[RMDB]
RNA sequence: GGGAACGACUCGAGUAGAGUCGAAAACUCUCUCACUACGGUGAGAGAGAAUGCUUAAGCCUCAAUAAAGCUUGCCUUGAGUGCCUCAAGCAGAUAUAGACUGAAACAUUUAGUAUGGGCAAGCAGGGAGCAACGGCUCGAGUACGCUCGAGCCGAACCCGUCAGCUAUAUUCGUAUAGCUGACGGGAAAAGAAACAACAACAACAAC
Reactivity to 2A3 in 0.01 (KOAc 150mM, MgCl2 10mM, bicine 150mM(pH8.5), 24C), signal-to-noise 1, nucleotides 027 to 156: c010u010c000u000c000u000c000a000c010u090a030c160g080g000u100g000a000g000a000g000a000g020a040a030u040g000c000u070u050a070a000g000c000c000u050c040a020a190u220a190a140a000g000c000u000u020g020c010c000u030u010g030a070g000u120g000c040c030u030c060a040a010g010c010a000g070a030u180a050u100a150g110a040c080u140g050a050a110a000c070a050u100u160u060a080g030u010a050u190g000g020g000c000a020a000g000c010a000g040g040g020a070g010c030a130a100c010g000g030c000u010c000g010a010g000u040a000c130g000c030u000c000g000a000g000c020c000g000a010a010
Annotation: This 207-nucleotide RNA was probed chemically with 2A3. The data come from the RNA Mapping Database (RMDB), library OK3TST. The reactions ran in a buffer of 150 mM KOAc, 10 mM MgCl2 and 150 mM bicine (pH 8.5), at 24 C.